Source: RMDB library PDB130, as collected in RNAgym. Structure probing data (2A3) for a 207-nucleotide construct. Values are in units of 0.01, from 0 to 300, in steps of 10. The 2A3 profile rests on 2,539 reads. For 2A3 the reverse transcriptase was SuperScript II with manganese.

RNA sequence: GGGAACGACUCGAGUAGAGUCGAAAAACCUGAGCCUUUCGAGGCUCAGGUGAAGCUGAUAUAGCUCAGUUGGUAGAGCGCACCCUUGGUGAGGGUGAGGUCGGCAGUUCGAAUCUGCCUAUCAGCACCAUCGGUAGAGCGAAUUCGUUCGCUCUACGUACGCAUCCUCUUUCGAGAGGAUGCGUACAAAAGAAACAACAACAACAAC
Reactivity to 2A3 in 0.01 (KOAc 150mM, MgCl2 10mM, bicine 150mM(pH8.5), 24C), signal-to-noise 4, nucleotides 027 to 156: a010c000c010u000g000a000g000c000c010u100u080u180c300g100a010g000g000c000u000c000a000g010g010u000g000a020a020g010c000u000g010a000u000a000u000a010g000c010u000c010a060g010u200u230g140g250u260a000g010a000g010c000g010c010a000c000c010c000u010u080g270g030u280g170a030g000g000g000u010g000a000g010g010u020c000g000g000c000a000g000u000u030c000g000a000a000u000c000u000g000c000c010u000a000u000c000a000g000c000a000c000c010a090u140c080g080g010u000a000g000a000g000c010g000a030a010u100u080c240g080u100u000c000g030c000u000c000u000a000c000

The reactions ran in a buffer of 150 mM KOAc, 10 mM MgCl2 and 150 mM bicine (pH 8.5), at 24 C. Values cover nucleotides 27 to 156.